The record gives the reactivity of an RNA of 207 nucleotides to DMS and 2A3. DMS adducts were read by reverse transcription with MarathonRT. The reactions ran in a buffer of 150 mM KOAc, 10 mM MgCl2 and 150 mM bicine (pH 8.5), at 24 C. Values cover nucleotides 27 to 156. The 2A3 profile rests on 8,113 reads. DMS (dimethyl sulfate) methylates the pairing face of unpaired adenines and cytosines.

RNA sequence: GGGAACGACUCGAGUAGAGUCGAAAACGCUGGGACCAGAGCGAACUGGUGUUGUCAGCUGAAGCGCGCACGGCUUGGAUUUACACCAUCCCGCUCGGUCCUGUGCUGAAGCGCGCACGGCAACCGAAAGGUGCGAAAGGGACUAUUCGUAGUCCAAAUAGUUACGAUUGUUCGCAAUCGUAACUAUAAAAGAAACAACAACAACAAC
Reactivity to DMS in 0.01 (KOAc 150mM, MgCl2 10mM, bicine 150mM(pH8.5), 24C), signal-to-noise 2, nucleotides 027 to 156: c060g010c040u010g010g030g030a040c020c030a120g030a020g030c000g000a060a090c130u000g010g020u010g000u000u000g020u000c060a150g000c000u000g010a030a060g020c020g010c000g000c030a300c010g000g000c030u010u000g040g020a160u000u000u000a100c010a060c020c000a080u000c080c030c010g040c020u000c000g020g000u020c000c010u000g000u010g040c010u000g000a080a030g010c030g060c030g020c020a300c040g000g010c020a100a090c010c020g010a130a120a220g020g020u000g010c020g020a030a090a170g010g000g020a060c020u000a100u000u000c210g030u000a020g000u000c000c010a000a090
Reactivity to 2A3 in 0.01 (KOAc 150mM, MgCl2 10mM, bicine 150mM(pH8.5), 24C), signal-to-noise 6, nucleotides 027 to 156: c050g000c020u020g000g000g000a010c020c020a210g000a060g020c020g020a090a050c080u040g030g050u000g050u060u080g170u100c060a000g000c010u020g040a140a050g010c010g000c010g020c020a040c040g030g000c000u060u130g160g050a120u190u160u140a010c000a010c000c000a010u150c020c070c000g000c000u000c000g000g000u000c010c000u010g000u010g000c000u070g030a130a040g000c000g000c000g000c010a000c010g040g000c010a040a040c010c010g050a110a030a040g030g000u010g000c010g050a090a030a050g110g000g000a000c010u020a020u090u110c250g140u090a010g010u000c000c000a040a090